[RMDB]
This 177-nucleotide RNA was probed chemically with 2A3 and DMS. For DMS the reverse transcriptase was MarathonRT. 2A3 adducts were read by reverse transcription with SuperScript II with manganese. It was measured as part of the RMDB library OK2TST.
RNA sequence: GGGAACGACUCGAGUAGAGUCGAAAAACAGGAAACACAUGCGAUGACUCUGCAACGGAAUAUAGUCCUAAAGGUAUAGAAGAGCUAAAUGCAAUGCGGGUUGAAAUGGUCGAAGACGAUGCAAUUGGGUCUUAAGAGGAUUCGUCCUCUUAAGACCAAAAGAAACAACAACAACAAC
Reactivity to 2A3 in 0.01 (KOAc 150mM, MgCl2 10mM, bicine 150mM(pH8.5), 24C), signal-to-noise 2, nucleotides 027 to 126: a020c030a030g070g090a050a080a000c050a010c000a070u030g040c030g140a100u050g020a030c020u040c030u030g000c020a030a080c050g020g020a060a020u190a010u030a080g040u020c000c000u030a120a110a040g040g000u060a060u050a160g150a160a010g020a020g010c030u080a130a060a000u100g020c000a020a030u070g020c010g040g000g000u070u040g030a050a120a060u060g020g030u020c010g010a040a000g010a010c020g030a030u080g010c020a010a090u150u140g170
Reactivity to DMS in 0.01 (KOAc 150mM, MgCl2 10mM, bicine 150mM(pH8.5), 24C), signal-to-noise 4, nucleotides 027 to 126: a130c060a070g000g010a100a080a100c100a050c100a060u000g010c060g000a110u000g000a030c020u000c020u010g020c040a050a190c270g020g000a100a100u000a070u000a060g020u000c010c020u010a060a110a070g000g000u000a070u000a070g000a070a050g020a080g000c040u000a050a050a090u000g010c040a050a070u000g000c090g010g000g000u000u000g010a080a050a090u000g000g010u000c030g020a100a070g000a060c060g010a060u000g000c080a040a100u010u010g010